This 207-nucleotide RNA was probed chemically with 2A3 and DMS.
The reactions ran in a buffer of 150 mM KOAc, 10 mM MgCl2 and 150 mM bicine (pH 8.5), at 24 C.
For DMS, 5,248 sequencing reads were counted.
Values cover nucleotides 27 to 156.
Reactivities are rounded to 0.1 and cut off at 0 and 3.

[RMDB]
RNA sequence: GGGAACGACUCGAGUAGAGUCGAAAAAGUUAGGUUCGCUAUGGUGCAACUCUUAAAGGCAAUAACGAACUAAUUCUAAGCAAGUAAUGGAGAAAUGCCAGGGUCACUAUCUAGCCAUAAUAGUGCUGUAAGUGACUUAGAUUCGUCUAAGUCACAAGGACAUAGAAAACUUCGGUUUUCUAUGUCCAAAAGAAACAACAACAACAAC
Reactivity to 2A3 in 0.01 (KOAc 150mM, MgCl2 10mM, bicine 150mM(pH8.5), 24C), signal-to-noise 5, nucleotides 027 to 156: a000g080u050u030a060g020g080u020u010c030g010c050u040a010u070g050g060u080g060c050a110a170c070u070c050u240u240a190a100a030g040g000c010a020a030u070a090a030c020g030a010a000c020u020a010a030u090u080c050u130a090a010g070c060a050a010g050u140a060a100u150g060g020a060g060a070a110a020u070g020c050c020a040g000g020g020u030c010a010c020u020a030u110c030u040a020g000c000c010a020u050a160a030u050a130g090u040g030c040u030g030u110a180a090g000u000g000a000c000u000u000a010g000a000u020u020c060g020u000c130u000a000a000g000u000c000a000c000a000a030
Reactivity to DMS in 0.01 (KOAc 150mM, MgCl2 10mM, bicine 150mM(pH8.5), 24C), signal-to-noise 3, nucleotides 027 to 156: a060g020u010u010a090g030g000u000u000c010g020c030u000a010u010g050g020u010g000c010a100a140c070u000c100u010u010a090a090a160g040g020c030a070a040u000a040a040c020g000a040a030c030u000a060a040u000u000c060u010a070a130g020c050a070a150g000u010a070a090u010g010g010a110g010a050a050a080u000g020c030c010a160g010g010g000u010c030a050c040u020a080u010c020u000a100g030c040c060a040u010a060a120u000a060g020u000g080c030u010g020u010a080a100g040u010g000a010c000u000u000a000g010a080u000u000c300g020u010c010u000a010a010g020u000c000a000c000a010a140